RNA sequence: GGGAACGACUCGAGUAGAGUCGAAAACAUUCUUGAAAAAGUGAUGUAGAUUUAUAGCCCAUAACUUUUUUGAAUUACAUCGACGAUACGGCGUCGAAAGAAAAAUAAAUGGACCGUAUGAAAGAAAAAAACAACAGUAGCUUCGGCUACUGUUGAACGCUAUGUAAAUCUUCGGAUUUACAUAGCGAAAAGAAACAACAACAACAAC
Reactivity to 2A3 in 0.01 (KOAc 150mM, MgCl2 10mM, bicine 150mM(pH8.5), 24C), signal-to-noise 1, nucleotides 027 to 156: c000a020u010u040c030u050u050g040a010a040a010a000a000g000u020g010a040u000g010u030a060g020a200u030u240u100a180u150a130g040c000c000c060a040u140a120a030c070u040u070u020u010u040u080g100a170a100u190u120a070c040a070u020c010g000a000c010g010a000u000a000c000g010g040c000g020u000c000g000a010a030a000g030a000a050a000a020a010u060a020a020a010u030g030g050a010c020c000g050u040a000u030g070a060a160a080g040a000a140a000a000a000a000a010c010a000a000c000a000g000u000a000g020c000u020u050c170g000g000c000u000a010c030u000g010u000u000g000a000a000
The record gives the reactivity of an RNA of 207 nucleotides to 2A3. The reactions ran in a buffer of 150 mM KOAc, 10 mM MgCl2 and 150 mM bicine (pH 8.5), at 24 C. The 2A3 profile rests on 767 reads. Values cover nucleotides 27 to 156. It was measured as part of the RMDB library M2RFOK.